[RMDB]
Overview:
Conditions: 150 mM KOAc, 10 mM MgCl2 and 150 mM bicine (pH 8.5), 24 C. This 177-nucleotide RNA was probed chemically with DMS and 2A3.
RNA sequence: GGGAACGACUCGAGUAGAGUCGAAAAAGGGUACAAUACCCUCGCAAGGGCUCGGUCAACCCGCCCCCGCAAGGUUUCGGGUUCGAUGAGCGGGGUGUGCUCACGCCGAGCCUACAGGGCCGGUGCAUAUGGUGAACUCAUUCGUGAGUUCACCAUAAAAAGAAACAACAACAACAAC
Reactivity to DMS in 0.01 (KOAc 150mM, MgCl2 10mM, bicine 150mM(pH8.5), 24C), signal-to-noise 4, nucleotides 027 to 126: a050g010g010g010u000a080c190a070a090u040a060c010c010c000u020c130g020c120a110a150g000g010g000c010u010c000g000g000u010c120a090a120c170c180c000g000c050c080c020c010c010g040c050a100a120g000g000u000u010u010c010g010g010g030u010u060c040g010a050u000g000a150g000c010g000g000g010g010u030g020u020g010c030u000c060a080c290g010c000c000g000a000g000c000c010u010a010c130a090g000g010g000c020c020g000g000u000g010c070a150
Reactivity to 2A3 in 0.01 (KOAc 150mM, MgCl2 10mM, bicine 150mM(pH8.5), 24C), signal-to-noise 4, nucleotides 027 to 126: a000g080g010g000u100a080c090a100a080u080a190c010c010c020u020c010g050c030a070a150g000g000g000c000u010c000g000g040u100c040a020a070c010c000c000g020c000c000c000c010c010g050c050a060a060g100g000u060u070u050c040g050g030g090u120u210c040g060a090u060g020a020g030c010g000g010g000g000u150g030u030g010c040u040c030a050c030g000c000c000g000a000g000c000c000u010a020c010a020g010g000g020c010c010g020g030u060g010c030a060

Values are in units of 0.01, from 0 to 300, in steps of 10. High 2A3 reactivity points to a flexible backbone, as in loops and unpaired stretches.